This 177-nucleotide RNA was probed chemically with DMS and 2A3. The 2A3 profile rests on 3,917 reads. DMS adducts were read by reverse transcription with MarathonRT. The DMS profile rests on 6,757 reads. Source: RMDB library OK2TRN, as collected in RNAgym. For 2A3 the reverse transcriptase was SuperScript II with manganese. Values cover nucleotides 27 to 126. Conditions: 150 mM KOAc, 10 mM MgCl2 and 150 mM bicine (pH 8.5), 24 C.
RNA sequence: GGGAACGACUCGAGUAGAGUCGAAAAGUCGCAUCAGUCGAUGUCGAGGGCGGUACGAGCGCAGUGGCCGGCCAGCGUAUCCAGAUCACCCGUGGCUGACGUGUUGGUGGCGAGGAUCUCCGCGUCGGCUUCACAAUAACUUCGGUUAUUGUGAAGCAAAAGAAACAACAACAACAAC
Reactivity to DMS in 0.01 (KOAc 150mM, MgCl2 10mM, bicine 150mM(pH8.5), 24C), signal-to-noise 4, nucleotides 027 to 126: g010u000c030g010c020a060u000c040a140g010u010c090g020a050u000g010u000c040g010a110g000g000g010c070g010g010u010a060c110g000a110g010c080g000c040a080g020u010g010g020c050c030g000g000c050c050a090g000c060g010u010a050u000c040c040a080g000a110u000c060a100c030c020c050g020u010g010g000c060u000g000a060c040g010u000g000u000u010g010g020u000g010g010c040g010a150g010g000a060u000c060u010c070c030g010c060g010u000c040g010
Reactivity to 2A3 in 0.01 (KOAc 150mM, MgCl2 10mM, bicine 150mM(pH8.5), 24C), signal-to-noise 3, nucleotides 027 to 126: g020u020c020g040c060a080u050c050a090g170u150c050g050a040u060g060u090c030g010a070g040g020g010c040g020g000u080a080c040g030a040g060c050g010c060a020g030u060g070g020c000c000g000g030c010c010a000g010c030g010u070a060u000c010c020a020g000a040u030c030a070c020c000c050g030u040g040g000c060u050g050a050c020g050u060g090u100u130g020g030u050g010g020c030g000a040g010g070a050u000c030u020c050c020g020c000g040u050c000g060